[RMDB]
RNA sequence: GGGAACGACUCGAGUAGAGUCGAAAAAAAAAAAAGAUAUGGACAUUAGAACUACCUUGAGGCACAGCGAAGAACUCGGAAACGAGGGAGCUGUGUCGAAAGGCUAAUGUCCUAAGUCAAAAAAAAAGAUAUCUAUCUAGUUCGCUAGAUAGAUAUCAAAAGAAACAACAACAACAAC
Reactivity to 2A3 in 0.01 (KOAc 150mM, MgCl2 10mM, bicine 150mM(pH8.5), 24C), signal-to-noise 1, nucleotides 027 to 126: a000a010a000a060a030a040a070a060g050a040u160a080u130g000g000a000c000a010u020u000a000g020a160a030c080u130a090c280c020u000u000g010a050g000g020c000a000c000a010g000c010g140a300a030g000a010a110c000u000c030g000g050a090a080a070c010g000a000g030g000g020a030g000c000u020g000u020g000u020c000g000a000a000a010g050g020c000u010a000a000u010g000u030c000c000u000a020a010g000u000c020a130a010a040a020a000a000a010a000a110
Reactivity to DMS in 0.01 (KOAc 150mM, MgCl2 10mM, bicine 150mM(pH8.5), 24C), signal-to-noise 1, nucleotides 027 to 126: a000a020a000a060a080a080a130a120g000a010u010a300u020g000g000a010c000a010u000u000a010g000a020a030c020u040a300c010c000u000u000g000a300g000g000c000a010c000a020g020c040g000a030a200g000a020a130c010u000c010g000g000a110a100a020c010g020a030g000g010g010a110g000c000u000g010u000g000u000c000g000a060a000a010g000g000c000u000a020a000u000g000u000c020c000u000a040a060g010u000c020a020a000a000a000a060a060a110a290a140

Structure probing data (2A3 and DMS) for a 177-nucleotide construct.
The 2A3 profile rests on 1,966 reads.
The RNA was probed in 150 mM KOAc, 10 mM MgCl2 and 150 mM bicine (pH 8.5) at 24 C.